Record summary
Structure probing data (DMS) for a 177-nucleotide construct. The reactions ran in a buffer of 150 mM KOAc, 10 mM MgCl2 and 150 mM bicine (pH 8.5), at 24 C. The data come from the RNA Mapping Database (RMDB), library OK2TST.
RNA sequence: GGGAACGACUCGAGUAGAGUCGAAAACAUCUGGUCGGGAACCAACGUGUUCUUCAACACCACGCUGACGGACAUAGCCAUCCUGAAAUACCGGCGCCUUUCCGCGCUGAACCAGAGAGCGACGGAGCUUUGGGAGCUUGUUCGCAAGCUCCCAAAGAAAAGAAACAACAACAACAAC
Reactivity to DMS in 0.01 (KOAc 150mM, MgCl2 10mM, bicine 150mM(pH8.5), 24C), signal-to-noise 1, nucleotides 027 to 126: c110a040u000c010u000g030g040u000c090g000g000g010a030a140c150c130a030a180c180g020u000g030u000u010c040u000u020c060a030a080c130a140c090c130a160c120g020c010u000g010a040c050g010g070a040c090a110u000a110g030c140c080a140u000c010c010u010g000a050a090a030u000a170c060c010g000g000c090g020c040c060u000u030u000c050c040g010c030g000c010u000g000a080a030c020c020a030g000a040g000a040g020c010g010a080c000g010g000a050g030